Source: RMDB library RFM100, as collected in RNAgym. The record gives the reactivity of an RNA of 177 nucleotides to 2A3. Values cover nucleotides 27 to 126. The reactions ran in a buffer of 150 mM KOAc, 10 mM MgCl2 and 150 mM bicine (pH 8.5), at 24 C. For 2A3, 435 sequencing reads were counted. 2A3 adducts were read by reverse transcription with SuperScript II with manganese.
RNA sequence: GGGAACGACUCGAGUAGAGUCGAAAAAGAUGGCCUGCGUACGCGCAGGCCAUCAGGGCAAUGAUGUAAAGGUUUUACGACUGACCUUUGUAACUAUGAAGGUUUCUACACUUGACCUGAGCUCAAAGGACGCUGUAGGAUUCGUCCUACAGCGUCCAAAAGAAACAACAACAACAAC
Reactivity to 2A3 in 0.01 (KOAc 150mM, MgCl2 10mM, bicine 150mM(pH8.5), 24C), signal-to-noise 1, nucleotides 027 to 126: a000g010a020u000g020g000c000c000u010g030c070g020u010a070c120g000c000g000c110a000g000g000c000c000a000u000c000a000g010g000g010c060a040a000u010g110a120u040g040u090a110a030a280g030g000u000u060u060u080a070c110g010a040c000u010g010a000c000c000u010u070u000g070u150a190a280c190u050a110u190g020a040a040g000g000u050u070u000c000u050a040c090a070c080u050u030g080a190c010c030u060g000a000g020c000u030c200a090a060a070